[RMDB]
RNA sequence: GGGAACGACUCGAGUAGAGUCGAAAAAAGAGUCCAGCUCAGAGGGUGAGACCAAGCGCAAGUUCCGGGAAGCCCUCGACCGCAAGAUGGCACAGUCGUCGAGCGGAUCCGAUCAUAAGGAUGGCGGGUAUCUAUCAAGGUUCGCCUUGAUAGAUACAAAAGAAACAACAACAACAAC
Reactivity to DMS in 0.01 (KOAc 150mM, MgCl2 10mM, bicine 150mM(pH8.5), 24C), signal-to-noise 7, nucleotides 027 to 126: a040a070g000a140g000u000c010c020a120g030c040u010c140a160g010a040g010g000g030u000g000a110g020a300c030c020a130a070g010c020g010c250a090a120g000u000u000c120c100g000g000g000a200a300g000c000c020c020u010c010g000a090c020c010g000c020a030a280g000a010u010g010g010c020a150c200a100g010u000c030g010u010c020g000a300g000c000g000g010a020u000c010c010g020a100u010c230a070u010a100a100g000g010a060u000g000g010c020g010g010
Reactivity to 2A3 in 0.01 (KOAc 150mM, MgCl2 10mM, bicine 150mM(pH8.5), 24C), signal-to-noise 4, nucleotides 027 to 126: a000a020g110a020g010u020c030c010a030g010c020u040c070a030g010a000g010g010g010u040g030a060g100a030c000c010a050a010g010c010g000c090a110a060g020u090u060c140c060g010g000g020a020a000g000c000c000c000u000c010g020a010c010c000g000c000a010a010g010a010u020g020g020c030a030c080a300g040u030c000g000u000c000g010a010g010c000g010g000a010u000c010c000g020a090u100c020a080u090a190a030g030g010a010u020g020g000c010g030g040